[RMDB]
RNA sequence: GGGAACGACUCGAGUAGAGUCGAAAAGCACCGCCGCAGUGCAGCCAACCUCCUACCGCACACACGCUGCCCGAGCCUGCUCCUGUCGCAGUCCUACCCGGUCCGGGGCCGGACCCGGGUAGGCGUAGACCCAGGAGUGAUUCGUCACUCCUGGGUCAAAAGAAACAACAACAACAAC
Reactivity to DMS in 0.01 (KOAc 150mM, MgCl2 10mM, bicine 150mM(pH8.5), 24C), signal-to-noise 2, nucleotides 027 to 126: g000c040a030c030c050g010c040c040g030c050a110g010u000g000c040a110g020c050c040a070a140c110c040u000c030c030u000a070c040c050g010c040a070c080a080c100a080c090g000c030u000g000c010c020c010g010a090g000c030c030u000g000c030u000c010c020u010g020u000c050g010c110a070g010u020c000c000u000a030c000c000c010g010g000u010c000c000g010g020g010g020c130c020g010g000a020c040c040c050g010g000g010u000a010g000g010c060g000u010a070